Source information: This 177-nucleotide RNA was probed chemically with DMS and 2A3.

[RMDB]
RNA sequence: GGGAACGACUCGAGUAGAGUCGAAAAGAUAUGGACCUUGUAGCUAGCCUACGUGAUGGUCGGAAACGACCAUCAGGCUUGGACCUAUUGGGUCCUAAGUCAAAACGUGUCUCUUCGGAGACACGAAGGCAUAUUACGUGUUCGCACGUAAUAUGCCAAAAGAAACAACAACAACAAC
Reactivity to DMS in 0.01 (KOAc 150mM, MgCl2 10mM, bicine 150mM(pH8.5), 24C), signal-to-noise 2, nucleotides 027 to 126: g030a060u000a300u000g000g010a060c000c000u010u000g040u000a010g010c110u010a070g030c020c000u020a080c230g000u030g030a050u020g020g000u000c010g020g000a090a120a180c000g000a000c000c000a000u000c030a040g000g000c040u000u000g000g020a110c300c000u000a040u010u000g000g010g000u000c000c000u010a040a060g010u010c020a060a080a090a170c040g000u000g000u000c010u000c000u000u000c300g040g000a000g040a000c010a000c010g000a020a050
Reactivity to 2A3 in 0.01 (KOAc 150mM, MgCl2 10mM, bicine 150mM(pH8.5), 24C), signal-to-noise 2, nucleotides 027 to 126: g000a040u060a070u160g000g020a030c010c000u010u030g020u000a010g040c030u070a020g020c020c010u090a120c210g200u230g030a000u000g000g000u000c010g040g000a090a110a020c020g000a000c000c000a000u000c000a010g000g000c000u020u130g030g060a070c030c020u000a050u040u090g010g000g000u020c000c000u020a140a000g080u020c050a000a040a070a060c010g010u010g000u000c000u000c000u010u060c300g190g000a000g000a000c000a000c010g000a020a030
The RNA was probed in 150 mM KOAc, 10 mM MgCl2 and 150 mM bicine (pH 8.5) at 24 C. The 2A3 profile rests on 5,219 reads.